Record summary:
Chemical mapping of a 177-nucleotide RNA with DMS and 2A3. For DMS the reverse transcriptase was MarathonRT. The data come from the RNA Mapping Database (RMDB), library TTRDES. The reactions ran in a buffer of 150 mM KOAc, 10 mM MgCl2 and 150 mM bicine (pH 8.5), at 24 C. For 2A3, 13,816 sequencing reads were counted. 2A3 adducts were read by reverse transcription with SuperScript II with manganese.

RNA sequence: GGGAACGACUCGAGUAGAGUCGAAAAGAUAUGGAGCCAGUGGCGCUGAUGACCAAUAUCGGAAACGAUAUUGCAAGGCGCCCACGGCUCCUAAGUCAAAACGUUAUCCCCUUCGGGGGAUAACGAACAAUAGGCAUGAGUUCGCUCAUGCCUAUUGAAAAGAAACAACAACAACAAC
Reactivity to DMS in 0.01 (KOAc 150mM, MgCl2 10mM, bicine 150mM(pH8.5), 24C), signal-to-noise 7, nucleotides 027 to 126: g010a030u010a300u000g000g010a010g030c010c010a160g020u020g010g010c000g030c000u000g000a100u020g010a230c300c010a010a010u000a010u000c000g010g010a160a080a170c000g010a020u000a010u000u000g000c010a060a100g010g030c000g000c040c000c010a010c060g000g020c010u000c000c010u010a000a070g000u000c030a110a080a130a150c020g000u000u000a010u000c000c000c000c000u000u010c240g030g010g000g000g000a000u000a000a000c000g000a050a060
Reactivity to 2A3 in 0.01 (KOAc 150mM, MgCl2 10mM, bicine 150mM(pH8.5), 24C), signal-to-noise 2, nucleotides 027 to 126: g020a000u060a040u140g010g000a000g000c050c050a130g040u210g190g000c010g020c020u060g070a300u110g010a030c000c040a010a010u000a010u010c000g020g030a050a050a020c010g000a000u010a000u010u000g000c000a060a120g020g000c020g000c000c000c010a010c020g010g000c000u000c010c000u000a000a010g020u010c020a030a030a060a070c020g000u000u000a000u000c000c000c050c010u030u300c300g130g000g000g000g000a000u000a010a000c000g000a020a000